RNA sequence: GGGAACGACUCGAGUAGAGUCGAAAAAGUGGCUAGUUCGCUAGCCACUAAAGACCGCACGGCAGCGGAAAUAACCCGAAACGCAAACAGAAGCGACUGAAAGACUCCAAACAUUCGUGUUUGGAAAAGUCUAUUCUUCUUUCGAGAAGAAUAGACUAAAAGAAACAACAACAACAAC
Reactivity to 2A3 in 0.01 (KOAc 150mM, MgCl2 10mM, bicine 150mM(pH8.5), 24C), signal-to-noise 1, nucleotides 027 to 126: a020g010u010g030g000c010u000a000g030u050u020c060g010c070u000a000g000c000c000a000c000u000a000a000a000g000a000c010c000g000c000a020c080g300g080c100a070g000c040g000g000a100a160a070u100a050a000c030c000c030g020a090a140a030c020g020c070a190a100a060c050a130g060a100a010g040c040g060a020c080u080g090a080a020a110g060a010c050u000c010c010a000a000a020c020a010u090u110c190g020u010g010u020u010u020g000g000a000a000a000
Reactivity to DMS in 0.01 (KOAc 150mM, MgCl2 10mM, bicine 150mM(pH8.5), 24C), signal-to-noise 3, nucleotides 027 to 126: a040g030u000g010g000c000u000a000g020u000u010c190g030c000u000a010g020c000c000a000c000u030a010a050a110g000a170c000c020g030c000a110c100g010g010c190a120g000c010g010g010a040a080a090u000a080a080c020c020c010g000a060a080a090c050g000c050a040a080a110c100a080g000a170a090g000c050g020a070c110u010g000a080a090a090g000a110c160u000c000c000a020a010a000c000a020u010u020c160g040u000g020u000u000u000g010g000a020a030a050
Record summary
The record gives the reactivity of an RNA of 177 nucleotides to 2A3 and DMS. It was measured as part of the RMDB library M2PK50.